[RMDB]
This 207-nucleotide RNA was probed chemically with 2A3 and DMS. It was measured as part of the RMDB library RSTRND. For 2A3, 3,187 sequencing reads were counted. The reactions ran in a buffer of 150 mM KOAc, 10 mM MgCl2 and 150 mM bicine (pH 8.5), at 24 C.

RNA sequence: GGGAACGACUCGAGUAGAGUCGAAAAAGGGCAUACCGAGGACCAGAAUACCUCGUAAAUACAUCUGGAAAAAAAUAGUCGCAAACGACGAAAACUACGCUUUAGCCGCUUAAUACGGCUAGCCUCUGCACCGAUGGGCCUUAACGUCGGGUCUGGCCCCAGUACUUAAGUUCGCUUAAGUACUGGGAAAAGAAACAACAACAACAAC
Reactivity to 2A3 in 0.01 (KOAc 150mM, MgCl2 10mM, bicine 150mM(pH8.5), 24C), signal-to-noise 4, nucleotides 027 to 156: a000g050g010g020c070a080u110a130c060c000g000a010g000g000a020c000c010a020g020a050a070u150a110c010c000u000c030g100u150a020a050a010u090a040c040a020u030c030u060g000g000a030a040a010a010a010a010a080u160a020g020u010c030g030c130a130a090a060c090g040a000c010g030a040a020a040a000c070u130a040c070g020c050u080u080u050a010g000c000c010g050c100u100u200a060a030u180a190c000g000g000c000u000a010g000c010c020u060c060u080g020c030a040c050c000g010a030u020g000g030g030c020c000u070u100a060a020c030g030u010c010g030g010g020u010c040u030g050g000c000
Reactivity to DMS in 0.01 (KOAc 150mM, MgCl2 10mM, bicine 150mM(pH8.5), 24C), signal-to-noise 1, nucleotides 027 to 156: a100g020g010g000c030a070u000a070c090c010g000a050g030g010a280c040c050a090g010a000a070u010a050c010c020u010c060g000u000a070a030a060u010a070c030a070u000c000u050g010g000a010a010a070a210a060a170a300u000a020g010u000c000g000c030a070a050a180c010g010a000c010g000a040a050a080a130c020u020a090c080g040c040u010u000u000a040g030c000c000g010c010u000u010a010a170u040a010c010g000g000c000u010a050g040c020c020u000c020u000g000c050a070c040c010g000a070u000g000g000g020c070c050u000u010a060a070c040g030u000c040g010g000g000u000c010u010g020g000c150